[RMDB]
RNA sequence: GGGAACGACUCGAGUAGAGUCGAAAAGGAUUGUUUGAGGCCAGGAGUUCAAGGCUGCAGUGAACUAUGAUCAUGCCACUGCACUCCAGUCUGAGCAACAGAGUGAGACUGUGUCUCUUAAAGAAAAGAAAAAGAAAAUUAUGUAACAGGUUAUAUAGCUACGUGAUUAUUUCGAUAAUCACGUAGCAAAAGAAACAACAACAACAAC
Reactivity to 2A3 in 0.01 (KOAc 150mM, MgCl2 10mM, bicine 150mM(pH8.5), 24C), signal-to-noise 3, nucleotides 027 to 156: g050g010a150u060u070g070u070u040u070g040a030g000g020c030c030a050g020g010a040g030u030u130c090a090a040g050g000c030u060g000c030a020g020u010g050a110a050c060u130a130u290g060a130u090c060a040u060g030c040c010a020c020u000g000c000a000c010u000c020c000a010g020u000c000u030g030a040g050c010a020a070c020a030g050a010g040u030g020a000g010a010c010u090g020u060g020u160c000u000c000u030u090a100a080a040g040a040a040a030a000g080a040a130a010a030a000g090a020a080a030a010u160u100a140u140g020u010a070a060c020a060g040g000u100u010a070u030a020u060a160
Reactivity to DMS in 0.01 (KOAc 150mM, MgCl2 10mM, bicine 150mM(pH8.5), 24C), signal-to-noise 2, nucleotides 027 to 156: g030g000a090u010u000g010u010u020u000g030a060g010g020c020c020a160g020g040a130g040u000u020c060a080a040g040g010c150u010g030c020a020g000u010g010a100a070c030u000a130u020g010a210u010c060a100u020g030c030c020a070c010u000g000c000a060c030u010c030c010a070g020u000c030u020g010a080g020c050a040a090c040a060g010a090g050u000g000a130g000a070c020u000g040u010g010u010c020u000c000u000u020a130a020a110g000a090a050a030a120g000a050a080a060a050a110g000a030a060a070a080u000u010a070u000g010u010a050a050c060a070g010g000u000u000a060u000a150u010a210